RNA sequence: GGGAACGACUCGAGUAGAGUCGAAAACAUCUUUUAAAACCACUACCUCAUGUUUAACCUCAGCAGCUUGCAUCUCUUUUUCAAAAUUAGCAACAUCUUCUAAGGUGACCAUGCUGUCUAGUUCACACGUUUUAGCCUAGUUCGCUAGGCUAAAACGAAAAGAAACAACAACAACAAC
Reactivity to DMS in 0.01 (KOAc 150mM, MgCl2 10mM, bicine 150mM(pH8.5), 24C), signal-to-noise 1, nucleotides 027 to 126: c130a100u010c020u010u010u000u000a000a090a150a140c090c060a120c060u000a080c060c020u020c040a060u010g000u000u000u010a120a130c030c020u000c070a050g020c050a090g020c090u010u000g040c070a070u030c030u000c010u000u000u030u000u000c130a050a020a050a060u000u000a080g040c020a090a080c050a010u000c010u010u010c110u010a050a150g020g010u000g000a040c090c090a080u020g000c000u000g010u010c020u000a050g000u010u000c060a060c130a130
Reactivity to 2A3 in 0.01 (KOAc 150mM, MgCl2 10mM, bicine 150mM(pH8.5), 24C), signal-to-noise 1, nucleotides 027 to 126: c010a070u030c110u060u130u060u060a160a150a030a010c040c010a010c040u080a010c030c050u080c040a050u050g060u050u140u030a080a060c010c000u030c030a020g000c010a010g030c100u020u110g000c040a050u000c010u000c010u140u050u040u060u050c080a060a130a120a140u070u070a060g050c010a000a030c000a070u070c000u200u010c010u080a070a060g030g000u040g030a050c000c000a010u110g060c010u010g010u000c050u010a030g060u030u170c010a010c030a020
Structure probing data (DMS and 2A3) for a 177-nucleotide construct. DMS adducts were read by reverse transcription with MarathonRT. The RNA was probed in 150 mM KOAc, 10 mM MgCl2 and 150 mM bicine (pH 8.5) at 24 C. The DMS profile rests on 903 reads. The 2A3 profile rests on 760 reads.